Source: RMDB library M2PK50, as collected in RNAgym. The record gives the reactivity of an RNA of 177 nucleotides to DMS and 2A3.

[RMDB]
RNA sequence: GGGAACGACUCGAGUAGAGUCGAAAACGACGUAGUUUCGACUACGUCGACAGGGAAACGAGCCAAGUGGCGCCGACCACUUAAAAACACCCGAAAAUAAAAGAGCCCGUACUUUCGAGUACGGGAAGUAUCAUUAAAUCUUCGGAUUUAAUGAUACAAAAGAAACAACAACAACAAC
Reactivity to DMS in 0.01 (KOAc 150mM, MgCl2 10mM, bicine 150mM(pH8.5), 24C), signal-to-noise 3, nucleotides 027 to 126: c020g020a010c010g010u010a010g010u000u000u030c160g010a030c010u010a010c000g000u010c000g010a050c110a100g010g000g000a080a070a170c120g020a160g020c030c040a060a000g010u000g000g000c030g030c100c100g000a150c020c000a010c020u000u010a020a040a020a080a070c120a070c020c010c020g000a060a090a110a170u000a060a050a220a260g010a280g010c000c000c000g020u010a000c000u000u000u010c150g020a020g000u000a010c000g000g020g000a000a010
Reactivity to 2A3 in 0.01 (KOAc 150mM, MgCl2 10mM, bicine 150mM(pH8.5), 24C), signal-to-noise 3, nucleotides 027 to 126: c000g000a010c010g000u000a010g010u010u070u080c210g060a030c010u000a000c010g000u000c000g010a040c010a040g000g010g040a080a150a090c080g020a060g120c020c020a080a000g010u010g020g060c140g060c210c030g120a180c000c010a040c000u070u030a110a090a000a000a030c050a040c000c020c000g030a040a090a110a110u090a070a130a130a050g110a060g200c040c020c000g000u000a000c000u040u050u140c240g040a000g020u000a000c000g000g000g000a000a020
Annotation
The reactions ran in a buffer of 150 mM KOAc, 10 mM MgCl2 and 150 mM bicine (pH 8.5), at 24 C.